[RMDB]
RNA sequence: GGGAACGACUCGAGUAGAGUCGAAAAUGAUACAUGUGCGUUGGUUCAUGUGGAUCUGGAGGGUGUACCCGGCUCAAUGAACAGUAUGUUGGAGAGAGCCCAAGUUCAUGCGCUACUGAUCACGGUACAAUUGACUCCUCUUCGGAGGAGUCAAUUGAAAAGAAACAACAACAACAAC
Reactivity to 2A3 in 0.01 (KOAc 150mM, MgCl2 10mM, bicine 150mM(pH8.5), 24C), signal-to-noise 2, nucleotides 027 to 126: u230g040a110u030a020c030a000u110g020u030g030c030g040u040u070g100g040u060u030c000a010u030g050u130g050g060a070u000c000u000g070g030a120g040g000g050u090g020u020a030c000c010c000g040g010c010u020c010a030a210u130g040a120a010c000a010g200u180a120u150g100u160u030g070g000a020g000a000g010a000g110c020c020c000a050a010g000u000u050c000a000u070g020c030g040c020u090a050c000u030g050a070u090c000a050c130g010g000u180a050
Reactivity to DMS in 0.01 (KOAc 150mM, MgCl2 10mM, bicine 150mM(pH8.5), 24C), signal-to-noise 2, nucleotides 027 to 126: u010g000a180u000a070c100a040u020g030u010g010c040g000u000u020g010g030u030u000c010a070u000g000u000g030g000a060u000c020u020g000g000a080g000g020g030u000g010u000a030c060c050c300g000g000c040u000c040a050a180u030g000a020a020c060a100g010u040a080u020g000u000u000g050g030a060g020a220g020a100g010c020c010c060a070a050g000u000u010c040a050u000g040c180g020c040u000a010c030u020g000a080u010c080a040c020g010g000u010a120